[RMDB]
RNA sequence: GGGAACGACUCGAGUAGAGUCGAAAACAUCCACUGCUACGGCAGUGGAUGAACGAGGUAGGUACGCCUACCUCGAAAGAUGGAUGUGAUCAUAUACAUUAAACGUCCAUGGUACGCCAUGGACGAACGAGUCCCAGGAUUUCGAUCCUGGGACUCGAAAAGAAACAACAACAACAAC
Reactivity to 2A3 in 0.01 (KOAc 150mM, MgCl2 10mM, bicine 150mM(pH8.5), 24C), signal-to-noise 1, nucleotides 027 to 126: c020a030u000c000c000a010c010u000g000c010u050a070c170g110g000c000a000g000u020g010g000a000u000g000a000a000c020g000a010g010g000u000a000g000g040u040a050c210g100c000c050u020a020c010c000u000c000g000a000a000a010g080a040u110g130g020a030u030g040u020g080a060u130c090a050u200a010u040a150c050a020u070u110a110a080a070c000g000u000c010c000a000u000g000g000u040a030c260g020c090c000a000u000g000g000a000c000g000a030a000
Conditions: 150 mM KOAc, 10 mM MgCl2 and 150 mM bicine (pH 8.5), 24 C. Structure probing data (2A3) for a 177-nucleotide construct. 2A3 adducts were read by reverse transcription with SuperScript II with manganese.